RNA sequence: GGGAACGACUCGAGUAGAGUCGAAAAGUGCUGUGGAAAGACAGGAAGGGGAAACAGUUCAAGAUUUUAGGCUGCUAGAAUGGAUGUUAUCUAGUUGCCCCUGAGGCUGUGGAGCUCAAGAGAGAGAUAUUUUAGUGGUGUUCGCACCACUAAAAUAAAAAGAAACAACAACAACAAC
Reactivity to DMS in 0.01 (KOAc 150mM, MgCl2 10mM, bicine 150mM(pH8.5), 24C), signal-to-noise 4, nucleotides 027 to 126: g020u010g010c040u000g030u000g000g010a080a080a060g010a090c090a060g020g010a090a070g010g010g010g030a150a060a080c060a040g000u000u010c040a080a180g010a120u000u010u010u010a110g000g010c050u000g010c010u000a020g010a030a090u000g010g010a220u000g000u010u000a080u000c010u000a030g020u000u000g000c020c020c080c050u010g000a080g000g020c030u020g010u000g000g000a110g030c020u000c070a060a060g010a090g010a100g000a060g020a190
Reactivity to 2A3 in 0.01 (KOAc 150mM, MgCl2 10mM, bicine 150mM(pH8.5), 24C), signal-to-noise 2, nucleotides 027 to 126: g050u040g000c020u020g010u050g120g040a060a090a040g060a010c020a030g000g070a040a070g030g020g020g000a040a050a000c030a040g030u040u080c040a080a020g020a070u050u070u090u280a020g000g000c050u070g000c000u010a030g000a080a070u160g090g100a060u140g080u230u100a060u110c000u010a010g020u040u030g030c010c000c000c010u050g000a030g040g010c010u020g020u050g060g010a010g000c000u010c050a040a030g040a000g000a000g000a000g010a100